[RMDB]
RNA sequence: GGGAACGACUCGAGUAGAGUCGAAAAGAUAUGGAAUCAGUGGUCAGCAACAGCUAGCAUCGGAAACGAUGCUAGACAUGCUGGCCAUAGAUUCCUAAGUCAAAAGUACGGAGUUCGCUCCGUACAACAUCGACAUUGGGUUCGCCCAAUGUCGAUGAAAAGAAACAACAACAACAAC
Reactivity to DMS in 0.01 (KOAc 150mM, MgCl2 10mM, bicine 150mM(pH8.5), 24C), signal-to-noise 2, nucleotides 027 to 126: g000a030u000a300u020g000g000a010a010u000c020a300g050u000g010g000u000c000a000g010c000a070a040c300a140g000c030u000a000g000c000a000u000c000g030g000a080a050a210c010g010a010u000g010c010u010a000g060a060c100a190u000g000c000u020g000g030c000c000a010u000a030g000a030u000u000c000c010u010a000a080g030u000c010a120a070a110a120g000u000a000c010g010g000a010g030u000u040c260g020c010u000c000c020g020u000a000c000a200a150
Reactivity to 2A3 in 0.01 (KOAc 150mM, MgCl2 10mM, bicine 150mM(pH8.5), 24C), signal-to-noise 1, nucleotides 027 to 126: g040a020u120a040u180g010g020a030a000u020c030a050g040u010g000g030u000c000a000g020c000a020a110c060a300g090c030u000a000g000c010a010u000c000g020g040a030a060a050c040g000a000u040g000c010u000a000g000a030c000a000u040g000c020u010g020g000c000c000a010u000a000g010a000u010u000c010c000u010a170a000g080u040c060a110a000a000a160g000u000a000c000g000g000a010g020u080u120c220g110c160u000c000c000g000u000a000c000a000a000